[RMDB]
RNA sequence: GGGAACGACUCGAGUAGAGUCGAAAAGGCACUUUGAACAGAUACUCCAACUUCUACAACAAGAGUGAGCAGCCAGGCAGAGGGACUGGGGACUGGGGAGAGGGUGGGCUGCUAGGAAAGGACCUGGGUCAUCUAGAGAAUUCGUUCUCUAGAUGACAAAAGAAACAACAACAACAAC
Reactivity to 2A3 in 0.01 (KOAc 150mM, MgCl2 10mM, bicine 150mM(pH8.5), 24C), signal-to-noise 3, nucleotides 027 to 126: g050g010c010a020c060u060u090u130g050a110a000c030a080g060a080u070a080c020u040c040c000a060a050c030u100u050c020u100a120c030a190a010c010a080a050g020a020g100u080g020a050g020c020a020g020c020c000a000g030g000c040a020g040a060g050g020g040a040c070u050g020g010g030g040a110c100u120g010g020g040g000a150g030a030g050g020g030u190g020g010g000c030u040g010c020u020a040g000g060a050a060a060g040g000a000c000c010u000g030g030
Reactivity to DMS in 0.01 (KOAc 150mM, MgCl2 10mM, bicine 150mM(pH8.5), 24C), signal-to-noise 2, nucleotides 027 to 126: g020g000c070a020c040u010u000u000g000a100a100c090a040g000a070u000a110c070u000c040c050a100a090c060u000u000c030u000a060c220a070a090c140a020a050g010a090g010u000g000a110g000c050a030g000c050c020a060g020g000c040a100g000a120g000g000g010a060c120u020g030g000g000g030a090c160u010g000g000g000g000a140g000a120g010g000g000u010g000g000g010c070u000g000c020u000a030g010g000a040a060a130g010g000a050c050c030u000g000g000